Structure probing data (DMS) for a 177-nucleotide construct. For DMS the reverse transcriptase was MarathonRT. The DMS profile rests on 1,263 reads. The reactions ran in a buffer of 150 mM KOAc, 10 mM MgCl2 and 150 mM bicine (pH 8.5), at 24 C.
RNA sequence: GGGAACGACUCGAGUAGAGUCGAAAAGGCGACGUCGUCCCGAAGGACGUCAACGCGGCCAUCGCGGUCAUCAAGACGAAGCGCACGAUCCAGUUCGUCGACUGGUGCCCGACAGGCUUCAAGGUCGAUUCACUCCAGGGUUCGCCCUGGAGUGAAUAAAAGAAACAACAACAACAAC
Reactivity to DMS in 0.01 (KOAc 150mM, MgCl2 10mM, bicine 150mM(pH8.5), 24C), signal-to-noise 2, nucleotides 027 to 126: g010g000c070g010a060c050g000u000c040g000u000c010c010c090g010a090a160g040g000a000c010g030u000c020a090a100c170g000c040g010g010c030c040a220u000c070g000c110g020g020u000c000a000u000c080a080a130g000a030c010g000a040a040g050c100g050c050a090c030g000a070u020c110c070a140g010u000u000c020g010u000c020g000a070c170u010g010g000u000g010c040c020c000g000a040c070a110g020g010c000u010u000c070a090a090g000g000u000c040g010